Structure probing data (DMS) for a 177-nucleotide construct. For DMS, 1,561 sequencing reads were counted. For DMS the reverse transcriptase was MarathonRT. The data come from the RNA Mapping Database (RMDB), library TTRINS.
RNA sequence: GGGAACGACUCGAGUAGAGUCGAAAAGAUAUGGAUGUAUCCUUUCCAAAGAAACAGGGAGGUGAAUUUCGGAAACGAAAUGAACACCGACGAUCUGUUUCUUUGGAAAGGAGUACAUCCUAAGUCAUCGCUAUUAUCAGUUCGCUGAUAAUAGCGAAAAAGAAACAACAACAACAAC
Reactivity to DMS in 0.01 (KOAc 150mM, MgCl2 10mM, bicine 150mM(pH8.5), 24C), signal-to-noise 1, nucleotides 027 to 126: g010a030u000a300u020g000g010a030u010g010u000a020u000c000c000u000u000u000c010c010a010a000a000g000a020a020a010c010a020g000g000g010a030g030g040u000g040a090a040u000u000u010c000g000g000a100a090a260c000g000a000a010a020u000g000a140a150c000a010c030c000g010a040c220g000a030u010c000u000g000u000u010u000c000u000u000u000g000g000a000a020a000g000g020a010g020u000a000c000a010u000c000c000u000a020a150g000u000c030a140
The RNA was probed in 150 mM KOAc, 10 mM MgCl2 and 150 mM bicine (pH 8.5) at 24 C.